[RMDB]
RNA sequence: GGGAACGACUCGAGUAGAGUCGAAAAUAUGACAGAGUCUGGUGGUACUAUGCAAUCGAUCAAGACAGCCCAGGGCUCCAUCGAUGGCUCAAUGAGAGAGAUCUCUGGUGUAAUUAUGGAAGACGUCAAACCUAAGACAGAUCUGAUUAAUAGCAUGGCUAUGAAACGAGUUCGCUCGUUUCAUAGCAAAAGAAACAACAACAACAAC
Reactivity to DMS in 0.01 (KOAc 150mM, MgCl2 10mM, bicine 150mM(pH8.5), 24C), signal-to-noise 2, nucleotides 027 to 156: u000a080u020g020a130c030a130g010a070g010u000c030u000g010g050u000g010g040u000a000c060u000a040u000g030c020a140a090u000c050g010a090u000c030a060a160g020a070c080a180g010c080c040c000a110g010g040g020c040u000c040c060a060u000c040g030a050u000g030g020c030u030c050a030a070u000g000a180g000a200g040a130g030a060u000c020u000c010u020g000g020u000g030u000a080a090u000u010a060u010g010g020a140a070g010a120c100g020u000c020a040a070a110c000c030u010a040a150g020a090c060a060g010a050u000c020u000g000a100u000u010a080a070u000a050g020c080a090u000g000
Reactivity to 2A3 in 0.01 (KOAc 150mM, MgCl2 10mM, bicine 150mM(pH8.5), 24C), signal-to-noise 3, nucleotides 027 to 156: u170a050u030g020a010c040a070g060a040g050u020c020u030g010g000u010g040g000u060a030c040u070a100u130g050c020a020a070u050c020g030a010u040c050a030a040g080a040c040a040g010c000c020c000a010g010g050g000c000u020c060c000a050u040c040g050a100u100g080g000c050u020c080a040a120u140g010a020g000a000g000a010g020a080u040c040u000c010u020g010g020u040g030u040a110a150u060u070a040u110g070g000a020a020g020a010c030g000u010c030a040a050a070c010c000u100a080a020g030a020c030a050g050a100u020c010u110g040a090u110u130a080a100u070a030g090c040a040u140g100